RNA sequence: GGGAACGACUCGAGUAGAGUCGAAAAGAAAGAAAGAAAGAAAUCUGACAGAAUGACGGAUUCGAUCGUUGUGGUCGGCGGGCCACCAGGUCAUUCCUUCGCACUGUCUCCGGGCAGACCGCCAUAAAAAAGCGGAUCUACUUCGGUAGAUCCGCAAGAGUCAUAAGCUGUUCGCAGCUUAUGACUCAAAAGAAACAACAACAACAAC
Reactivity to 2A3 in 0.01 (KOAc 150mM, MgCl2 10mM, bicine 150mM(pH8.5), 24C), signal-to-noise 1, nucleotides 027 to 156: g010a030a040a000g100a010a060a020g100a000a180a010g050a030a040a070u040c020u070g000a020c000a060g080a080a170u150g020a030c020g000g040a030u000u090c090g020a020u040c080g160u100u040g000u000g000g000u030c060g050g160c050g040g030g010c000c000a000c020c030a010g060g000u000c010a030u110u000c000c000u030u120c050g020c060a030c000u000g000u000c000u030c020c000g000g000g000c020a020g050a120c040c000g040c000c010a070u200a060a150a010a000a010a000g000c010g000g000a010u000c010u000a000c000u010u020c050g000g000u000a000g000a030u000c000c000g030c000a000a000